RNA sequence: GGGAACGACUCGAGUAGAGUCGAAAAGGUAGGUCGUGAGACCUACCAACUAGGACGUGAGUCCUAGAGAGAUACGUGAGUAUCUCACGGUGUCGGUGACGACACCGACCGCUGCUACGGCAGCGGAGUCAUCGUUCGCGAUGACACUGAAUCUUCGGAUUCAGACGUUGUCUUCGGACAACGACCGUUGUCGUGAGACAACGGAAGUCCUACGUACGCGUAGGACAAAUUUAGGUGAUUUGCUACCUUUAAGUGCAGCUAGAAAUACCGACUGGUUCGCCAGUCGGAAAAGAAACAACAACAACAAC
Reactivity to DMS in 0.01 (KOAc 150mM, MgCl2 10mM, bicine 150mM(pH8.5), 24C), signal-to-noise 3, nucleotides 027 to 266: g010g010u000a010g020g010u000c000g000u050g000a240g010a010c000c010u000a000c010c000a040a060c020u000a010g000g010a000c000g010u040g000a230g000u000c000c010u000a010g000a230g010a020g000a020u000a010c010g010u030g010a240g010u000a010u010c000u000c000a170c100g010g020u000g000u000c010g010g020u010g010a240c000g020a030c000a010c000c000g030a140c010c010g010c000u000g010c010u010a080c190g030g010c000a000g020c000g000g000a110g010u000c000a020u000c000g010u000u020c190g030c060g020a020u000g010a000c010a160c010u000g000a010a010u000c000u000u030c160g010g010a020u000u000c000a000g000a240c040g000u010u000g000u010c000u000u010c210g010g010a010c010a000a010c000g010a190c020c040g010u000u010g000u000c000g000u000g010a180g000a020c000a010a010c010g000g000a100a090g010u000c000c000u000a010c000g020u010a080c210g050c010g000u000a000g000g010a000c000a010a050a060u010u010u020a010g010g010u000g000a140u000u030u000g000c020u000a000c010c000u000u000u010a030a010g000u010g000c000a000g010c300u010a090g000a100a100a110u000a090
Reactivity to 2A3 in 0.01 (KOAc 150mM, MgCl2 10mM, bicine 150mM(pH8.5), 24C), signal-to-noise 9, nucleotides 027 to 266: g000g000u000a000g000g000u010c020g030u060g120a130g000a030c000c000u000a000c000c000a000a000c000u000a000g000g000a000c010g120u140g110a050g010u010c000c000u000a000g010a000g000a000g000a000u000a000c030g060u100g110a070g010u010a000u000c000u000c020a080c060g000g000u000g000u000c000g000g120u110g040a080c020g000a000c000a000c000c000g000a010c000c000g000c000u000g000c010u030a050c240g140g000c000a000g000c000g000g000a030g000u000c000a000u000c000g050u060u070c230g020c010g080a000u000g000a000c000a010c040u000g000a000a000u000c000u030u100c230g120g000a000u000u000c000a010g050a070c040g000u000u000g000u000c010u030u050c180g100g000a000c000a010a000c010g040a050c000c010g000u000u000g000u000c000g020u030g020a040g000a000c000a000a000c000g000g010a020a030g000u000c000c000u000a000c000g020u020a020c290g020c010g140u000a000g000g000a000c000a000a030a000u160u150u110a020g000g020u030g110a300u070u070u080g010c000u010a010c020c000u110u160u300a000a010g010u010g000c000a000g010c020u080a050g110a160a120a030u280a100
This 307-nucleotide RNA was probed chemically with DMS and 2A3. For DMS, 8,292 sequencing reads were counted. High DMS reactivity at an A or C suggests that its Watson-Crick edge is free. Conditions: 150 mM KOAc, 10 mM MgCl2 and 150 mM bicine (pH 8.5), 24 C.